Chemical mapping of a 207-nucleotide RNA with 2A3. It was measured as part of the RMDB library ARCHII. For 2A3, 981 sequencing reads were counted. Values cover nucleotides 27 to 156.
RNA sequence: GGGAACGACUCGAGUAGAGUCGAAAAUGAAGGGUCUCAAAUUAAGCGGGCUAUGCUACGAUCCUCCGCCUGGGGAUUUGUAGAUGAAUCUAAUCAGGCUAGCUCCAUGAAAGCCUGUUGGUAGGCCAACAUGAGAGCGAAUGAUAAUAUACCAACUCAACACCAGUAGCUUCGGCUACUGGUGUUGAAAAGAAACAACAACAACAAC
Reactivity to 2A3 in 0.01 (KOAc 150mM, MgCl2 10mM, bicine 150mM(pH8.5), 24C), signal-to-noise 2, nucleotides 027 to 156: u140g030a020a030g050g000g050u030c010u000c030a090a090a070u200u160a120a050g020c060g010g030g000c010u030a050u090g030c000u000a000c010g000a000u010c010c000u000c000c020g000c010c000u000g010g000g010g020a000u040u030u300g000u000a010g000a040u040g020a010a080u160c190u150a000a040u040c000a000g000g000c000u020a000g000c000u000c000c000a000u000g000a060a010a000g010c000c010u000g000u000u010g010g000u010a000g010g000c010c000a000a000c000a000u140g040a150g000a010g250c000g010a000a010u070g090a090u060a060a020u000a000u010a000c000c000a010a000c000u000